RNA sequence: GGGAACGACUCGAGUAGAGUCGAAAAUAGCUAUCUUCAAGAGUUAUGAGCUUAAUCUGGAGUCAUAUCCCACGAUAGAGCUAAUGAACAUUCUUUCAAUAUCCAGCGGGAAGUUGAUUGGCCAGUCUGAUCUCUUAAGAUUCGUCUUAAGAGAUCAAAAAGAAACAACAACAACAAC
Reactivity to 2A3 in 0.01 (KOAc 150mM, MgCl2 10mM, bicine 150mM(pH8.5), 24C), signal-to-noise 4, nucleotides 027 to 126: u020a010g000c000u030a070u180c070u250u130c130a190a130g030a000g110u050u050a040u090g040a040g020c010u020u070a040a070u130c000u050g140g010a010g010u000c010a010u050a190u170c010c030c010a010c020g060a040u130a090g060a020g010c000u020a010a020u050g060a000a030c020a240u020u020c010u030u110u060c040a110a050u070a110u240c070c040a030g010c060g040g000g010a000a000g000u030u030g090a040u030u020g030g010c000c010a010g020u000c070
Reactivity to DMS in 0.01 (KOAc 150mM, MgCl2 10mM, bicine 150mM(pH8.5), 24C), signal-to-noise 9, nucleotides 027 to 126: u000a030g010c010u010a050u010c130u000u010c220a100a150g000a040g010u000u000a010u000g000a200g010c010u000u000a050a130u010c030u000g000g010a030g010u000c060a070u010a150u010c010c000c010a110c230g000a060u000a090g010a150g010c020u010a020a030u010g010a040a040c050a090u000u000c020u000u000u000c060a070a100u010a080u010c120c150a090g000c130g000g000g010a020a080g010u000u000g000a030u000u000g010g010c020c030a250g000u000c090